[RMDB]
RNA sequence: GGGAACGACUCGAGUAGAGUCGAAAAGAUAUGGAUUACGACGAUAAGCUCCAUUCGGAAACGAAUGAAGAGCUUUUGACGUGUAAUCCUAAGUCAAAACAUGAACCUGGUUCGCCAGGUUCAUGAAGUCUUUUGAUAACUUCGGUUAUCAAAAGACAAAAGAAACAACAACAACAAC
Reactivity to DMS in 0.01 (KOAc 150mM, MgCl2 10mM, bicine 150mM(pH8.5), 24C), signal-to-noise 2, nucleotides 027 to 126: g010a000u000a190u000g000g010a020u000u000a010c000g020a040c000g000a090u010a030a020g000c000u000c010c000a010u000u000c000g010g000a040a060a110c000g000a000a000u000g000a140a170g010a020g000c000u000u000u010u000g000a240c090g000u000g000u000a000a000u000c000c000u000a020a090g010u010c020a080a070a110a230c000a020u000g010a010a000c010c000u000g010g000u010u000c260g020c010c000a000g000g000u000u000c000a000u010g000a050a130
Reactivity to 2A3 in 0.01 (KOAc 150mM, MgCl2 10mM, bicine 150mM(pH8.5), 24C), signal-to-noise 2, nucleotides 027 to 126: g010a020u020a040u100g010g010a010u020u020a010c210g060a010c000g040a200u020a300a060g000c000u010c010c000a000u000u000c010g000g050a030a010a020c020g010a000a020u070g090a190a200g020a010g010c000u030u040u020u030g020a010c010g010u030g000u020a000a020u000c000c000u010a040a000g040u010c030a010a020a080a210c000a010u010g010a000a000c000c000u000g030g030u030u060c140g050c100c000a000g000g000u010u000c000a000u000g000a010a000
This 177-nucleotide RNA was probed chemically with DMS and 2A3. It was measured as part of the RMDB library TTRDEL. The 2A3 profile rests on 3,954 reads. The reactions ran in a buffer of 150 mM KOAc, 10 mM MgCl2 and 150 mM bicine (pH 8.5), at 24 C. DMS adducts were read by reverse transcription with MarathonRT.